[RMDB]
RNA sequence: GGGAACGACUCGAGUAGAGUCGAAAAUGAAGCAAAUCCAUAAUUGCAAAUGAUGAGCAAUUCGCUAUUGCCGCCUAAAAACGGUUAGCCGGGGCUGCUAGAGCCUUGUUACCAAAGAUAGCCGGCGUUACGGCAUGAUGGUUCGCCAUCAUGCCAAGUACAUACGCGAGUUCGCUCGCGUAUGUACAAAAGAAACAACAACAACAAC
Reactivity to DMS in 0.01 (KOAc 150mM, MgCl2 10mM, bicine 150mM(pH8.5), 24C), signal-to-noise 1, nucleotides 027 to 156: u010g040a030a120g010c060a080a030a160u000c040c010a150u020a080a030u020u000g050c060a030a130a200u000g010a120u000g000a180g000c020a080a060u000u020c040g020c030u000a010u010u000g000c010c010g000c040c050u000a060a060a060a150a040c080g010g010u000u000a010g070c040c050g010g050g000g030c030u000g070c040u000a080g010a090g000c010c020u080u000g020u010u000a120c140c050a010a160a090g020a130u000a000g030c020c140g000g000c030g090u000u000a100c170g000g050c010a010u030g000a030u000g010g000u000u020c300g030c030c000a030u000c000a000u000g000c020c000a000a060
Reactivity to 2A3 in 0.01 (KOAc 150mM, MgCl2 10mM, bicine 150mM(pH8.5), 24C), signal-to-noise 3, nucleotides 027 to 156: u080g030a040a020g060c070a080a080a030u030c040c010a040u080a140a020u100u010g000c060a000a100a140u200g110a090u120g030a030g040c010a020a030u070u140c070g010c080u090a040u110u150g020c010c010g020c010c020u060a090a070a020a000a010c030g010g020u090u040a010g030c030c030g000g000g010g020c010u050g030c100u120a030g030a010g230c000c000u030u020g050u050u070a050c030c050a100a010a040g080a050u060a020g030c030c030g010g000c020g030u050u160a040c050g000g000c000a000u000g000a000u010g000g040u020u020c130g030c070c000a000u000c000a000u000g000c000c000a010a000